[RMDB]
Chemical mapping of a 177-nucleotide RNA with DMS and 2A3.
For 2A3, 1,114 sequencing reads were counted.
The RNA was probed in 150 mM KOAc, 10 mM MgCl2 and 150 mM bicine (pH 8.5) at 24 C.
RNA sequence: GGGAACGACUCGAGUAGAGUCGAAAACUCUUGUGCAAAUCGCGUUUCAUGGACAGACGGUGUCUUGCCCUGAUGUCCGGUUUUUUCCGUCAGCGCAGUGCCCGGCUGUUCUGUUGCGGCGCGUCUCUCCCCCAAGUUUUUUCGAAAACUUGGGGGAAAAAGAAACAACAACAACAAC
Reactivity to DMS in 0.01 (KOAc 150mM, MgCl2 10mM, bicine 150mM(pH8.5), 24C), signal-to-noise 1, nucleotides 027 to 126: c000u000c030u030u000g000u010g050c260a060a140a050u030c060g010c000g000u030u000u000c000a020u020g020g000a000c000a030g000a060c010g000g000u070g000u040c000u000u000g040c000c070c000u000g000a020u020g010u040c160c120g000g010u060u020u010u000u030u000c040c000g020u000c000a000g000c300g020c000a000g010u000g000c020c010c000g000g020c000u000g000u000u010c000u000g040u010u020g000c040g000g000c000g000c030g010u010c110u000c090
Reactivity to 2A3 in 0.01 (KOAc 150mM, MgCl2 10mM, bicine 150mM(pH8.5), 24C), signal-to-noise 2, nucleotides 027 to 126: c020u010c010u020u150g070u100g120c150a040a070a120u090c010g000c000g040u000u060u060c050a040u070g000g000a010c020a010g000a010c010g020g000u080g000u060c030u000u020g030c040c020c000u010g010a060u040g210u140c060c000g020g030u140u110u040u000u080u040c030c000g040u070c040a000g000c000g000c010a010g050u040g020c010c000c000g010g010c000u020g000u060u000c010u030g030u000u020g000c010g010g000c000g000c000g060u000c000u000c000